[RMDB]
RNA sequence: GGGAACGACUCGAGUAGAGUCGAAAAGAGAUGGCGAGAGCCAUCGGUAGUAUAGCGAAAAUCAUAAAUGAGAAGAGCUCUAAACGCCUAAGUAGAGUUAAAAUAAUUAGACAGGCACUACUAUAAACACGGCCUCGAACGUUCGCGUUCGAGGCAACAUUAUUACCAGCUUCGGCUGGUAAUAAUGAAAAGAAACAACAACAACAAC
Reactivity to 2A3 in 0.01 (KOAc 150mM, MgCl2 10mM, bicine 150mM(pH8.5), 24C), signal-to-noise 3, nucleotides 027 to 156: g100a000g010a000u000g000g000c020g000a070g010a020g060c000c000a000u000c010g010g000u020a020g010u010a070u090a060g080c060g040a070a070a030a010u090c050a070u080a170a090a080u150g040a040g010a110a020g010a020g010c000u000c000u020a020a010a000c050g000c000c000u060a180a030g010u000a010g010a010g030u170u190a000a020a010a030u130a020a030u210u030a020g010a010c010a010g000g040c010a000c030u100a010c020u050a040u130a270a150a030c150a020c110g070g000c000c000u000c010g000a000a000c010g030u090u060c150g000c020g100u000u000c000g020a010g000g000c000a000a000
Reactivity to DMS in 0.01 (KOAc 150mM, MgCl2 10mM, bicine 150mM(pH8.5), 24C), signal-to-noise 1, nucleotides 027 to 156: g000a100g040a000u020g000g000c000g000a260g040a300g000c000c010a020u000c000g000g010u000a060g010u000a120u000a060g010c070g010a060a010a020a090u010c010a090u010a110a070a070u010g000a120g050a040a100g000a120g060c000u000c020u000a060a120a150c110g000c030c020u020a030a010g050u000a020g020a090g000u020u000a020a070a030a150u000a050a070u010u000a100g000a100c070a120g000g000c030a120c020u000a000c060u000a140u000a080a060a070c080a100c110g000g000c000c000u000c000g060a030a020c000g050u000u020c300g000c010g080u000u040c000g000a000g000g030c010a010a000
An RNA of 207 nucleotides, treated with 2A3 and DMS and read out base by base.